Source information:
This 207-nucleotide RNA was probed chemically with 2A3.
[RMDB]
RNA sequence: GGGAACGACUCGAGUAGAGUCGAAAAAUAGAUGGCUGUGGUUCCAUAUCUACCAGUGGUAUCUCGACCAACGGCUGUGACGUAGACCUCAUACCUUGCAUGUCCACGCGAAUCUUUUUAUUAUAUCUGGGUGAUCGUAGACUAGUUAAAAUGUGUGAGCACUAGGAAUGUUCGCAUUCCUAGUGCUAAAAGAAACAACAACAACAAC
Reactivity to 2A3 in 0.01 (KOAc 150mM, MgCl2 10mM, bicine 150mM(pH8.5), 24C), signal-to-noise 1, nucleotides 027 to 156: a000u070a020g090a020u040g010g020c020u000g000u000g010g080u060u020c010c010a010u010a000u000c050u050a120c090c100a030g040u030g050g000u070a040u050c150u090c150g040a000c040c000a130a130c040g010g010c000u000g030u010g040a000c000g020u020a030g070a180c040c000u070c010a040u070a100c000c020u030u040g020c050a030u010g020u020c010c000a000c060g010c000g040a010a040u020c020u070u090u020u000u040a180u300u060a230u150a040u300c080u010g080g000g000u050g150a040u030c000g000u010a010g020a000c000u010a020g080u130u070a090a000a090a070u100g020u030g040u040g040
2A3 adducts were read by reverse transcription with SuperScript II with manganese. The 2A3 profile rests on 474 reads. Source: RMDB library OK3TST, as collected in RNAgym.